Annotation
This 207-nucleotide RNA was probed chemically with DMS and 2A3. Source: RMDB library RNAMAK, as collected in RNAgym. For 2A3 the reverse transcriptase was SuperScript II with manganese.
RNA sequence: GGGAACGACUCGAGUAGAGUCGAAAAUCCUAAGUCUCGUUGUUAACGCGUUUGACGUCGUACCGAGUCUAUUCGGAAACGAAUAGACGUUUGACGUACGACCGAGCGUUAGCCGAGAUAUGGAAAACUCACUCCAAGGUUCGCCUUGGAGUGAGAACACGAUUUCAUCGUUCGCGAUGAAAUCGUGAAAAGAAACAACAACAACAAC
Reactivity to DMS in 0.01 (KOAc 150mM, MgCl2 10mM, bicine 150mM(pH8.5), 24C), signal-to-noise 1, nucleotides 027 to 156: u000c030c020u000a000a300g010u000c000u000c010g010u010u000g000u000u020a010a000c020g020c060g000u020u010u000g020a140c040g020u010c000g040u010a020c000c000g020a180g020u000c040u010a000u000u000c020g010g020a100a100a260c000g020a050a010u000a020g020a000c020g020u010u000u000g020a090c170g010u010a010c000g000a020c000c000g000a260g050c000g040u000u010a020g020c000c000g030a030g020a010u000a270u000g000g010a110a050a130a140c010u000c020a010c000u000c000c010a020a010g000g000u000u000c130g020c020c000u000u020g000g000a020g030u000g020a010g020a040a150
Reactivity to 2A3 in 0.01 (KOAc 150mM, MgCl2 10mM, bicine 150mM(pH8.5), 24C), signal-to-noise 3, nucleotides 027 to 156: u010c020c000u050a190a030g050u000c000u010c000g130u160u210g020u030u000a000a000c000g070c060g070u020u100u300g110a130c060g000u020c000g000u000a020c010c020g020a020g010u000c000u000a000u000u020c000g070g070a110a090a050c010g010a000a000u000a010g000a020c000g000u010u080u140g070a060c020g000u000a000c000g000a000c000c000g020a020g000c000g000u000u010a000g010c000c000g000a000g010a000u020a040u030g020g010a000a060a040a040c000u000c000a000c000u000c000c000a000a000g010g020u080u120c260g140c050c010u020u000g000g000a000g000u000g000a000g000a000a000